[RMDB]
RNA sequence: GGGAACGACUCGAGUAGAGUCGAAAACUGGACGACCGAGUGUCGGCGGAUACCUCCGGGCAGCUUGUCUGCUUGCAUGCUCCCAUGGGCUGGCUCCUGCUUGCAGUCCCAGCUUCCGGAAUGAGAGCACGAAUAUACCGUUCGCGGUAUAUUCGUGAAAAGAAACAACAACAACAAC
Reactivity to DMS in 0.01 (KOAc 150mM, MgCl2 10mM, bicine 150mM(pH8.5), 24C), signal-to-noise 1, nucleotides 027 to 126: c050u000g020g000a190c000g020a020c020c010g020a150g020u030g040u000c000g000g000c060g000g000a100u000a080c060c070u000c040c040g000g000g010c130a000g010c020u000u000g000u010c000u000g000c000u020u010g000c070a050u000g010c070u000c030c020c030a060u020g010g030g000c120u010g020g000c020u010c050c050u000g010c020u000u010g000c010a020g030u000c240c070c070a020g000c030u000u010c020c050g010g020a070a090u010g010a100g010a090g010
Reactivity to 2A3 in 0.01 (KOAc 150mM, MgCl2 10mM, bicine 150mM(pH8.5), 24C), signal-to-noise 1, nucleotides 027 to 126: c000u000g080g130a070c010g030a030c040c000g240a160g040u240g020u030c020g040g000c020g020g000a040u110a150c000c040u000c000c000g000g000g000c100a000g000c010u020u110g040u130c010u010g020c000u020u040g020c020a020u120g000c030u020c030c030c020a040u190g050g000g050c040u000g040g000c000u040c060c010u060g020c020u000u050g000c010a000g010u060c020c020c020a000g000c000u010u070c020c010g050g080a090a100u130g070a180g000a020g150
Overview: An RNA of 177 nucleotides, treated with DMS and 2A3 and read out base by base. 2A3 adducts were read by reverse transcription with SuperScript II with manganese. The RNA was probed in 150 mM KOAc, 10 mM MgCl2 and 150 mM bicine (pH 8.5) at 24 C.